Background:
The record gives the reactivity of an RNA of 177 nucleotides to 2A3 and DMS. It was measured as part of the RMDB library OK1LIB. The reactions ran in a buffer of 150 mM KOAc, 10 mM MgCl2 and 150 mM bicine (pH 8.5), at 24 C. High 2A3 reactivity points to a flexible backbone, as in loops and unpaired stretches.
[RMDB]
RNA sequence: GGGAACGACUCGAGUAGAGUCGAAAAGAAAAAGUCGUCGAGUCCGGAGAAUAUCGAGUAGUGGAUACGAUCCGGAGAGUAUCGACUACAAGAGAGACGAAAGUCUCGAUAUCGAGACGACGAAAAAGGGUAUAUUAUGCUUCGGCAUAAUAUACCCAAAAGAAACAACAACAACAAC
Reactivity to 2A3 in 0.01 (KOAc 150mM, MgCl2 10mM, bicine 150mM(pH8.5), 24C), signal-to-noise 3, nucleotides 027 to 126: g050a000a100a010a000a000g040u010c010g000u000c000g010a010g150u000c020c020g040g020a050g050a120a040u040a010u030c050g030a030g160u110a040g080u120g190g010a010u010a030c020g010a070u020c000c030g020g030a040g020a010g030u040a020u030c010g050a010c020u000a000c000a020a080g060a000g020a010g010a060c020g050a050a050a030g000u000c000u000c010g000a070u010a010u040c000g000a010g020a020c000g000a000c000g050a070a000a010a010a010
Reactivity to DMS in 0.01 (KOAc 150mM, MgCl2 10mM, bicine 150mM(pH8.5), 24C), signal-to-noise 4, nucleotides 027 to 126: g030a050a090a080a110a120g000u000c000g010u000c000g010a240g000u010c050c020g020g000a090g010a290a090u000a010u020c000g020a190g010u010a090g010u010g010g000a020u000a000c100g030a210u000c020c020g010g000a050g000a060g030u010a040u010c020g000a060c100u020a030c110a170a090g010a160g000a000g000a000c010g020a160a070a120g010u010c000u000c000g000a040u030a060u020c020g010a170g010a060c010g020a020c000g000a040a040a110a110a060